The record gives the reactivity of an RNA of 177 nucleotides to DMS and 2A3. Values cover nucleotides 27 to 126. DMS (dimethyl sulfate) methylates the pairing face of unpaired adenines and cytosines.
RNA sequence: GGGAACGACUCGAGUAGAGUCGAAAAGCAUGGCGGACACGUAGGAUUUAUCGGCGGUACGCCGUUGCGCCCUGAAAUGUGGCUGGAACGCCGAAUUCCUGACUGGCUGACAACGUACCUGGAGGCGCUACUAAAAUAGUUUCGACUAUUUUAGUAGAAAAGAAACAACAACAACAAC
Reactivity to DMS in 0.01 (KOAc 150mM, MgCl2 10mM, bicine 150mM(pH8.5), 24C), signal-to-noise 9, nucleotides 027 to 126: g020c020a040u020g000g020c010g010g010a050c040a080c060g030u000a090g020g010a100u030u030u030a090u020c000g000g010c020g000g010u010a070c040g000c010c000g020u010u010g010c030g010c030c000c010u020g020a050a070a070u020g010u020g010g000c020u010g010g010a120a120c060g000c010c010g020a070a130u010u000c010c000u000g010a090c060u010g000g000c010u000g000a100c070a060a090c080g010u010a070c030c010u010g000g000a080g000g010c090g010
Reactivity to 2A3 in 0.01 (KOAc 150mM, MgCl2 10mM, bicine 150mM(pH8.5), 24C), signal-to-noise 9, nucleotides 027 to 126: g030c030a020u050g020g000c030g020g040a040c060a020c230g060u100a100g050g120a130u100u180u150a200u240c010g030g000c010g000g020u060a020c020g000c010c000g010u020u060g010c020g020c000c000c000u020g110a090a100a060u210g040u100g040g000c030u050g040g040a080a030c030g000c010c010g020a020a060u050u020c010c000u030g070a090c020u030g020g000c010u020g010a040c020a060a010c090g050u050a080c000c010u020g040g010a030g020g030c030g000
Conditions: 150 mM KOAc, 10 mM MgCl2 and 150 mM bicine (pH 8.5), 24 C. For 2A3 the reverse transcriptase was SuperScript II with manganese. The 2A3 profile rests on 28,730 reads.